[RMDB]
RNA sequence: GGGAACGACUCGAGUAGAGUCGAAAAUUUAGCGGGAUUGUCAUGCAGACGAAGGACGAUAUCAUCAAUGGUUAAUUUACCUUCUUCAACAGCAGCCAACAAUAGUGGUAAUGAAUCUUUGAUACCCCCUAUCUUGUAGGUUCGCCUACAAGAUAGGAAAAGAAACAACAACAACAAC
Reactivity to DMS in 0.01 (KOAc 150mM, MgCl2 10mM, bicine 150mM(pH8.5), 24C), signal-to-noise 7, nucleotides 027 to 126: u010u000u000a060g010c070g010g000g000a080u010u000g020u000c050a080u000g020c070a100g010a060c120g020a060a050g000g010a080c140g010a060u010a050u000c060a060u010c150a090a080u010g000g000u000u000a050a080u010u000u000a110c040c010u000u000c050u000u000c060a060a080c120a070g000c040a050g000c050c050a050a090c090a060a080u010a060g010u000g000g010u000a050a060u000g010a060a060u000c020u000u000u010g010a090u010a160c030c010c030
Reactivity to 2A3 in 0.01 (KOAc 150mM, MgCl2 10mM, bicine 150mM(pH8.5), 24C), signal-to-noise 6, nucleotides 027 to 126: u060u050u030a040g030c050g010g020g030a010u040u060g060u100c050a030u070g030c030a020g020a040c030g020a020a010g040g010a020c060g030a040u030a040u120c050a020u020c030a040a170u080g030g040u060u110a070a110u100u070u110a090c010c000u030u040c000u060u060c030a090a070c000a060g040c000a010g020c020c020a040a030c040a080a110u100a080g100u030g050g030u060a040a050u090g050a040a030u030c020u030u060u110g040a050u190a180c000c000c000